RNA sequence: GGGAACGACUCGAGUAGAGUCGAAAAUCCUAAGUCUAAUCGGGAGAUCUCUUGAUUUCUAUGAAGUUAUCGGAAACGAUAAUGGAGAAAUACAGAGAUCGAGGAUCGAUUAGAUAUGGAAAAGUACACGAUUCAUGUUCGCAUGAAUCGUGUACAACAUGCCGUAGGGCUUCGGCCCUACGGCAUGAAAAGAAACAACAACAACAAC
Reactivity to 2A3 in 0.01 (KOAc 150mM, MgCl2 10mM, bicine 150mM(pH8.5), 24C), signal-to-noise 1, nucleotides 027 to 156: u040c010c000u040a130a000g020u000c000u000a010a000u000c010g000g030g000a040g020a000u020c030u010c000u130u230g030a040u050u000u010c110u060a300u140g050a080a000g010u000u000a010u000c010g050g030a110a040a040c000g010a000u000a000a010u020g000g000a030g000a000a020a020u130a130c010a000g000a000g000a010u000c000g000a000g010g010a000u010c000g000a000u000u000a010g010a000u050a070u040g020g020a020a000a000a160g000u000a000c000a010c010g020a010u000u000c000a010u000g110u130u140c300g060c190a000u000g010a000a000u000c000g010u000g000u010a000c000a000a000